[RMDB]
RNA sequence: GGGAACGACUCGAGUAGAGUCGAAAAAAGGGUUGAGUAGCACUCAGAGGGAGAGCAUCACACAGAGGUAAGCAGAGAAAUCACCUCCAGAGGACCCCUUCAGCGAACAGAAGAGCGCAACGCGCGACUCUAUUACCCACUUCGGUGGGUAAUAGAGAAAAGAAACAACAACAACAAC
Reactivity to 2A3 in 0.01 (KOAc 150mM, MgCl2 10mM, bicine 150mM(pH8.5), 24C), signal-to-noise 1, nucleotides 027 to 126: a000a000g040g010g010u080u170g020a030g020u070a030g030c030a070c090u060c020a030g020a020g070g000g010a080g020a030g050c000a030u090c020a010c010a000c030a050g030a030g060g020u050a000a060g010c000a040g070a000g070a190a050a020u080c010a090c000c020u080c030c000a100g030a080g090g050a040c000c000c000c000u010u000c000a030g030c020g130a050a040c030a140g170a160a000g060a090g030c020g020c030a100a140c130g000c000g010c020g080a020
Reactivity to DMS in 0.01 (KOAc 150mM, MgCl2 10mM, bicine 150mM(pH8.5), 24C), signal-to-noise 1, nucleotides 027 to 126: a050a050g000g000g000u000u010g000a090g000u000a080g010c050a150c050u010c020a100g000a110g000g000g010a060g010a040g010c100a070u000c060a070c080a110c080a100g000a050g000g010u000a060a060g020c090a020g000a150g020a000a130a090u000c070a080c040c010u000c040c090a230g000a070g020g000a120c110c020c070c020u010u010c040a050g060c080g030a110a030c070a020g010a040a120g000a100g000c020g000c080a060a080c120g000c050g020c100g020a150

An RNA of 177 nucleotides, treated with 2A3 and DMS and read out base by base. For 2A3, 766 sequencing reads were counted. The RNA was probed in 150 mM KOAc, 10 mM MgCl2 and 150 mM bicine (pH 8.5) at 24 C. Values cover nucleotides 27 to 126. 2A3 adducts were read by reverse transcription with SuperScript II with manganese. For DMS the reverse transcriptase was MarathonRT. For DMS, 663 sequencing reads were counted.